Source information:
This 177-nucleotide RNA was probed chemically with 2A3 and DMS. The RNA was probed in 150 mM KOAc, 10 mM MgCl2 and 150 mM bicine (pH 8.5) at 24 C. The data come from the RNA Mapping Database (RMDB), library OK2TRN.
RNA sequence: GGGAACGACUCGAGUAGAGUCGAAAAACGUGAUGAGUUAUGCUUUGGAUACAUUGAGUGGUGGACGGGGGGCCCCUGUGGAACCCUUGGGGAUGCUUAGGCCUCUGGGUGUGACAUCUGUAGCUCCAGUUACUGAAGAUUUCGAUCUUCAGUAACUAAAAGAAACAACAACAACAAC
Reactivity to 2A3 in 0.01 (KOAc 150mM, MgCl2 10mM, bicine 150mM(pH8.5), 24C), signal-to-noise 2, nucleotides 027 to 126: a000c060g060u090g020a050u060g010a040g050u120u050a070u160g020c040u040u100u120g070g020a070u080a140c020a090u080u100g060a050g030u070g020g040u050g020g040a030c020g040g010g010g030g050g020c000c010c000c000u070g040u110g000g040a060a060c040c000c000u030u080g020g000g000g010a020u060g030c110u110u100a100g000g170c000c020u030c010u030g050g000g000u060g010u040g040a010c000a050u050c030u070g070u090a020g000c000u030c020c020
Reactivity to DMS in 0.01 (KOAc 150mM, MgCl2 10mM, bicine 150mM(pH8.5), 24C), signal-to-noise 5, nucleotides 027 to 126: a070c110g020u000g010a080u000g010a110g010u010u000a060u000g010c040u000u010u010g010g010a110u000a070c080a080u010u010g000a100g020u000g000g030u000g010g000a080c100g000g000g010g010g010g010c040c020c020c080u010g010u000g010g010a120a070c030c020c020u000u010g010g010g000g000a080u000g010c110u000u010a070g010g000c030c020u000c030u000g000g000g020u000g010u000g010a070c050a050u000c080u000g010u000a080g010c060u000c060c120